[RMDB]
An RNA of 177 nucleotides, treated with DMS and 2A3 and read out base by base.
The reactions ran in a buffer of 150 mM KOAc, 10 mM MgCl2 and 150 mM bicine (pH 8.5), at 24 C.
High 2A3 reactivity points to a flexible backbone, as in loops and unpaired stretches.
The 2A3 profile rests on 4,709 reads.
For DMS, 3,626 sequencing reads were counted.
RNA sequence: GGGAACGACUCGAGUAGAGUCGAAAAGGUCAACGCGCACCUCGUCAACUGCGCAGAUGACGUGAAGCCGGAGUGGCUGGAGGGCGUCAAGAGGGUCUCCUUGACGGCGGGGGCAAGCACACCGGAGGACGAUUCGAAUAUUCGUAUUCGAAUCGUCAAAAGAAACAACAACAACAAC
Reactivity to DMS in 0.01 (KOAc 150mM, MgCl2 10mM, bicine 150mM(pH8.5), 24C), signal-to-noise 4, nucleotides 027 to 126: g020g010u010c050a040a170c120g000c040g030c030a030c090c030u010c150g010u010c140a110a080c150u000g010c040g010c020a060g010a130u010g000a030c010g020u000g010a120a100g000c010c000g010g020a130g030u000g010g000c040u020g000g000a100g010g000g010c040g030u020c030a020a030g000a160g000g010g000u000c060u010c040c010u010u000g000a020c030g000g010c080g000g000g000g010g010c110a090a060g020c050a040c060a110c020c020g010g000a180g020
Reactivity to 2A3 in 0.01 (KOAc 150mM, MgCl2 10mM, bicine 150mM(pH8.5), 24C), signal-to-noise 3, nucleotides 027 to 126: g080g020u020c010a070a020c050g010c010g000c010a030c030c020u060c030g180u080c040a060a060c050u050g000c020g010c030a020g040a140u110g020a020c040g050u070g070a040a020g060c020c010g010g040a100g030u130g100g040c020u020g010g040a090g050g030g040c020g030u020c010a010a010g060a080g040g080g080u020c030u050c060c000u010u030g020a020c000g040g040c050g030g000g020g020g010c040a040a000g030c000a010c000a010c020c010g020g040a050g110